Source information:
Chemical mapping of a 207-nucleotide RNA with 2A3. As a SHAPE reagent, 2A3 marks flexible, mostly unpaired nucleotides at the ribose 2'-OH. The data come from the RNA Mapping Database (RMDB), library RNAMAK. The RNA was probed in 150 mM KOAc, 10 mM MgCl2 and 150 mM bicine (pH 8.5) at 24 C.
RNA sequence: GGGAACGACUCGAGUAGAGUCGAAAAGGGGUCCAAGUUCCAUGAGGUGGAAGAGGUAUGGCUGAAGCCUCCACGGCCAUACUACCCACCUUCCACUCCCCACCAUGUCGUGAGCUUGGACGGAGGCACCCAAAAUGUCGUCAGUUCGCUGACGACAGCGUAGAUAUUCCUUCGGGAAUAUCUACGCAAAAGAAACAACAACAACAAC
Reactivity to 2A3 in 0.01 (KOAc 150mM, MgCl2 10mM, bicine 150mM(pH8.5), 24C), signal-to-noise 1, nucleotides 027 to 156: g060g010g020g010u010c010c000a010a000g010u000u010c070c010a030u040g010a030g020g000u010g000g000a010a000g010a000g030g000u000a000u000g000g000c000u010g020a120a030g040c000c000u000c000c000a010c010g000g000c010c000a010u010a000c000u020a040c050c110c030a010c000c000u000u010c010c000a010c010u050c060c050c010c020a070c000c020a090u160g050u130c180g160u070g070a000g000c010u010u000g010g000a000c000g000g000a010g010g000c010a050c000c010c010a080a070a000a080u090g000u000c000g000u000c000a000g010u040u100c150g010c150u000g010a000c000g010a000c000a000